RNA sequence: GGGAACGACUCGAGUAGAGUCGAAAACGGUGGAAUCGGGGCUGAUGACCGCGGUGGGGGCGAGUGAAUAGGACUUGGCCCGAUUUCAGUCGCCGUGAGCAGAACGUCCCGGAGCUGAUGGACGACCCUAGCAUCAUUGCUUCGGCAAUGAUGCUAGAAAAGAAACAACAACAACAAC
Reactivity to 2A3 in 0.01 (KOAc 150mM, MgCl2 10mM, bicine 150mM(pH8.5), 24C), signal-to-noise 1, nucleotides 027 to 126: c020g010g050u090g020g110a040a030u080c000g000g000g000g000c010u000g010a050u010g050a090c010c000g050c030g020g000u070g030g130g000g000g030c030g000a000g010u040g050a120a170u130a190g060g110a010c030u020u070g160g080c000c000c010g040a040u010u150u070c020a020g050u070c020g000c000c000g020u000g030a010g000c000a010g000a010a020c050g010u000c000c000c000g010g000a000g020c000u050g020a150u080g050g070a000c060g050a030c100c000
Reactivity to DMS in 0.01 (KOAc 150mM, MgCl2 10mM, bicine 150mM(pH8.5), 24C), signal-to-noise 1, nucleotides 027 to 126: c040g020g000u010g010g020a040a140u000c010g010g010g000g000c020u000g050a280u000g000a060c030c000g010c040g010g020u010g010g000g010g010g020c010g010a030g010u000g000a080a070u020a060g030g030a050c050u000u000g000g020c000c000c010g000a130u020u020u010c180a100g020u020c110g000c010c030g040u000g010a170g020c030a050g010a130a200c230g000u000c020c000c030g010g010a040g020c010u000g000a050u000g010g000a150c120g010a150c050c040

Structure probing data (2A3 and DMS) for a 177-nucleotide construct.
For DMS, 1,112 sequencing reads were counted.
2A3 adducts were read by reverse transcription with SuperScript II with manganese.